[RMDB]
RNA sequence: GGGAACGACUCGAGUAGAGUCGAAAAUGUCCUCCCUUCUUCUGCUCCUCCCCACAGAGAUCUGUGCUGCCGACUGUGGUGGCCAUGGCGUGUGCGUAGGGGGCACCUGCCGCUGCGAGGAUGGCUGGAUGGGGGCAGCCUGCGACCAGCGGGCCUAAGCAUGGAUAAAUUUCGAUUUAUCCAUGCUAAAAGAAACAACAACAACAAC
Reactivity to DMS in 0.01 (KOAc 150mM, MgCl2 10mM, bicine 150mM(pH8.5), 24C), signal-to-noise 2, nucleotides 027 to 156: u020g000u000c050c020u000c000c010c010u020u000c040u010u000c040u010g000c030u010c020c020u000c030c020c010c030a050c030a110g000a170g000a070u000c050u000g030u000g020c000u000g000c000c000g010a220c120u020g030u000g050g020u000g040g050c050c020a020u000g040g030c050g000u000g010u010g010c060g060u010a090g010g020g020g020g060c010a040c060c020u010g030c010c000g010c030u000g000c040g000a270g000g020a090u000g020g020c050u010g000g020a110u010g010g000g010g040g030c050a040g010c000c000u000g010c000g000a300c160c050a150g000c020g000g030g010c010c010u000a120
Reactivity to 2A3 in 0.01 (KOAc 150mM, MgCl2 10mM, bicine 150mM(pH8.5), 24C), signal-to-noise 3, nucleotides 027 to 156: u170g050u050c000c010u070c020c020c000u070u070c040u090u050c060u140g050c030u040c010c000u080c000c010c000c000a000c010a000g070a010g000a130u000c010u070g080u140g040c030u030g000c000c020g130a270c120u100g100u160g130g000u050g030g000c010c030a050u070g010g000c010g010u070g010u020g020c060g070u070a110g000g020g000g000g000c000a040c000c020u070g010c000c000g000c010u020g000c020g010a020g080g030a110u090g030g000c000u000g050g030a150u070g090g000g000g000g000c000a000g000c000c000u030g040c000g050a090c010c020a000g010c010g000g000g000c000c010u010a000

Structure probing data (DMS and 2A3) for a 207-nucleotide construct.
High DMS reactivity at an A or C suggests that its Watson-Crick edge is free.
For DMS, 4,702 sequencing reads were counted.
Reactivities are given for positions 27 through 156.